Overview:
Source: RMDB libraries RFM100 and RFMREP, as collected in RNAgym. Chemical mapping of a 177-nucleotide RNA with DMS and 2A3. The RNA was probed in 150 mM KOAc, 10 mM MgCl2 and 150 mM bicine (pH 8.5) at 24 C. DMS adducts were read by reverse transcription with MarathonRT. Reactivities are rounded to 0.1 and cut off at 0 and 3.

[RMDB]
RNA sequence: GGGAACGACUCGAGUAGAGUCGAAAAGAAUAUGAUUACAGCGCCUGCGAUGGCAUAUAACCGUAUUGCGGAUGGAGCGUCACGUGAGGACUGUGAAGCACAAUGCGAUAUGUUCUGAUUAUAUGGCACUAACGCUAGGGUUCGCCCUAGCGUUAGUAAAAGAAACAACAACAACAAC
Reactivity to DMS in 0.01 (KOAc 150mM, MgCl2 10mM, bicine 150mM(pH8.5), 24C), signal-to-noise 4, nucleotides 027 to 126: g000a240a040u000a020u000g020a180u010u000a070c060a100g000c170g000c020c000u000g020c060g010a070u000g030g000c010a070u040a070u010a080a080c050c030g040u000a060u010u020g000c020g010g010a180u000g020g010a120g000c100g010u000c000a010c030g010u000g000a090g000g000a080c020u020g010u000g010a060a090g000c040a090c100a060a230u030g010c000g000a040u020a070u000g000u000u010c060u000g000a110u000u010a070u020a020u010g000g010c140
Reactivity to 2A3 in 0.01 (KOAc 150mM, MgCl2 10mM, bicine 150mM(pH8.5), 24C), signal-to-noise 5, nucleotides 027 to 126: g050a040a020u150a050u160g080a070u090u180a070c020a010g070c050g020c090c010u030g010c000g180a200u080g000g060c040a000u030a020u050a130a060c000c000g020u020a080u090u220g020c040g090g010a090u030g040g060a120g050c040g000u010c020a000c030g020u050g130a100g040g030a020c060u060g010u020g060a020a000g000c020a040c030a080a110u120g010c010g020a030u040a010u090g070u040u070c020u020g040a060u040u040a080u020a040u140g070g000c050